[RMDB]
RNA sequence: GGGAACGACUCGAGUAGAGUCGAAAAGAUAUGGAGACUAGUAGGGAGAUCCACUUCGGAAACGAAGUGAAGAUCUUUGAUCUACAUGUCUCCUAAGUCAAAUCGCCAAGCGUUCGCGCUUGGCGAACCACCUAAAGAGGUUCGCCUCUUUAGGUGGAAAAGAAACAACAACAACAAC
Reactivity to DMS in 0.01 (KOAc 150mM, MgCl2 10mM, bicine 150mM(pH8.5), 24C), signal-to-noise 2, nucleotides 027 to 126: g010a010u000a020u020g000g010a020g030a020c000u010a120g010u000a010g000g000g010a010g000a010u010c010c000a020c010u000u000c000g010g000a020a020a020c010g000a010a020g010u000g000a140a160g010a010u010c000u010u010u000g000a040u000c010u000a010c020a130u000g010u000c000u000c000c000u000a000a040g000u010c010a070a210a180u000c010g000c010c020a000a000g040c010g040u000u010c290g020c030g030c010u000u020g020g030c010g010a000a090
Reactivity to 2A3 in 0.01 (KOAc 150mM, MgCl2 10mM, bicine 150mM(pH8.5), 24C), signal-to-noise 2, nucleotides 027 to 126: g000a020u030a000u080g000g000a000g000a000c020u040a070g050u000a010g010g010g010a010g000a010u030c030c000a000c000u000u000c010g020g000a010a010a000c000g000a010a020g000u010g000a040a080g010a000u000c010u290u180u030g000a010u000c000u000a000c000a050u130g000u040c000u010c000c000u000a010a000g000u000c020a050a020a290u050c010g000c000c010a000a000g000c000g060u110u280c300g010c000g010c220u000u000g000g000c000g010a000a010

This 177-nucleotide RNA was probed chemically with DMS and 2A3. It was measured as part of the RMDB library TTRDES. For DMS the reverse transcriptase was MarathonRT. For DMS, 2,430 sequencing reads were counted. The RNA was probed in 150 mM KOAc, 10 mM MgCl2 and 150 mM bicine (pH 8.5) at 24 C.